[RMDB]
RNA sequence: GGGAACGACUCGAGUAGAGUCGAAAAGAAGGGUGCAAGCCCUUGAUACUGUAGUGGAAAUUAUAAAUAAGAAGAGUUCUGAGUUGCUUAAGCAGAACUAAAAUAAAAAGACAAGCAUUAUUACAAACAUGGCGAGGUAAGUUCGCUUACCUCGCAACCUAAGACUGGUGUUCGCACCAGUCUUAGGAAAAGAAACAACAACAACAAC
Reactivity to 2A3 in 0.01 (KOAc 150mM, MgCl2 10mM, bicine 150mM(pH8.5), 24C), signal-to-noise 1, nucleotides 027 to 156: g090a000a020g010g000g010u070g030c060a050a030g000c000c000c000u000u000g010a010u030a070c030u050g050u120a050g000u020g050g010a010a030a030u130u100a040u080a260a110a080u260a090a010g070a060a030g010a010g030u000u010c010u030g000a010g050u060u100g020c030u080u080a090a000g010c000a000g000a020a010c020u040a010a040a000a000u070a000a060a000a000a000g030a010c030a030a010g000c000a010u000u100a010u120u090a220c070a040a060a000c030a040u100g060g000c010g000a000g000g000u000a000a000g000u010u050c120g020c050u000u000a000c000c000u000c000g010c000a000a000

The record gives the reactivity of an RNA of 207 nucleotides to 2A3. Source: RMDB library M2RFPK, as collected in RNAgym. For 2A3, 1,110 sequencing reads were counted. Conditions: 150 mM KOAc, 10 mM MgCl2 and 150 mM bicine (pH 8.5), 24 C. 2A3 adducts were read by reverse transcription with SuperScript II with manganese.